Chemical mapping of a 177-nucleotide RNA with 2A3 and DMS. For DMS, 21,336 sequencing reads were counted. DMS (dimethyl sulfate) methylates the pairing face of unpaired adenines and cytosines. 2A3 adducts were read by reverse transcription with SuperScript II with manganese. Values cover nucleotides 27 to 126. The data come from the RNA Mapping Database (RMDB), library OK1LIB. The RNA was probed in 150 mM KOAc, 10 mM MgCl2 and 150 mM bicine (pH 8.5) at 24 C. High 2A3 reactivity points to a flexible backbone, as in loops and unpaired stretches.
RNA sequence: GGGAACGACUCGAGUAGAGUCGAAAAUGAGUGAUGUACUGAUUCGGGACAUCCCCGACGACGUGUUAGCAAGCCUUGACGCGAUCGCGGCACGCUUGGGCUUGUCGCGGACCGAAUACAUCCGUCGGAUAUAUUGUGCAUUCGUGCACAAUAUAUCAAAAGAAACAACAACAACAAC
Reactivity to 2A3 in 0.01 (KOAc 150mM, MgCl2 10mM, bicine 150mM(pH8.5), 24C), signal-to-noise 9, nucleotides 027 to 126: u240g020a040g060u230g010a010u000g010u020a020c050u060g140a300u020u020c010g030g090g020a010c010a050u040c000c010c010c000g040a040c090g050a060c010g010u020g020u030u060a070g010c030a100a020g010c010c040u190u300g070a150c110g020c010g040a080u180c120g000c010g020g000c020a000c020g020c000u030u050g020g020g010c000u010u020g010u010c060g000c000g230g010a010c010c010g020a050a030u030a020c000a000u000c020c020g090u080c040g060
Reactivity to DMS in 0.01 (KOAc 150mM, MgCl2 10mM, bicine 150mM(pH8.5), 24C), signal-to-noise 8, nucleotides 027 to 126: u030g010a140g020u050g010a010u000g010u000a020c110u020g000a160u000u000c010g000g000g010a020c020a020u000c300c000c000c010g000a040c140g010a140c010g020u000g000u010u010a080g050c010a110a300g000c020c030u020u030g010a130c260g020c000g000a060u030c160g010c010g000g000c000a010c090g000c020u000u000g000g000g000c130u000u000g000u000c000g010c000g000g000a030c020c040g000a130a170u000a020c010a010u010c000c040g000u030c120g000